[RMDB]
RNA sequence: GGGAACGACUCGAGUAGAGUCGAAAAUUACUAGUCUGUGAUGAAUUGCUUUGACUUCUGACACCUCGUAUGAAAACUGCACGUGCAGUCUGAUUAUUAAGCAAGACUGAGGCUUAAAAUAAAUCAAAACUAUCUAGGAUUUCGAUCCUAGAUAGUUAAAAGAAACAACAACAACAAC
Reactivity to 2A3 in 0.01 (KOAc 150mM, MgCl2 10mM, bicine 150mM(pH8.5), 24C), signal-to-noise 4, nucleotides 027 to 126: u090u050a040c030u000a010g040u000c030u030g160u040g080a080u020g030a030a140u060u060g010c020u070u050u080g040a090c000u030u000c020u050g040a030c010a080c050c010u030c050g010u070a050u140g070a070a020a070a040c050u050g000c030a030c140g110u140g000c010a020g030u000c010u000g010a010u010u080a040u070u080a030a000g010c010a010a030g020a030c020u060g040a020g060g020c000u060u050a060a060a020a030u150a060a100a010u070c020a050a120
Reactivity to DMS in 0.01 (KOAc 150mM, MgCl2 10mM, bicine 150mM(pH8.5), 24C), signal-to-noise 5, nucleotides 027 to 126: u000u000a130c080u010a040g010u000c030u000g010u000g010a080u000g000a080a150u000u000g010c050u000u000u010g010a080c070u000u000c040u010g010a080c050a060c050c020u000c080g000u010a030u000g000a090a050a120a080c080u000g010c010a140c300g010u000g020c010a030g000u000c060u000g000a080u000u000a090u000u010a020a020g000c030a050a040g010a090c070u000g000a060g000g000c020u000u000a030a040a070a090u000a050a050a060u010c060a060a100
Structure probing data (2A3 and DMS) for a 177-nucleotide construct. Conditions: 150 mM KOAc, 10 mM MgCl2 and 150 mM bicine (pH 8.5), 24 C. In probing experiments dimethyl sulfate is read out at A N1 and C N3, which are open when not base-paired. High 2A3 reactivity points to a flexible backbone, as in loops and unpaired stretches. For 2A3, 4,914 sequencing reads were counted. Source: RMDB library M2PK90, as collected in RNAgym.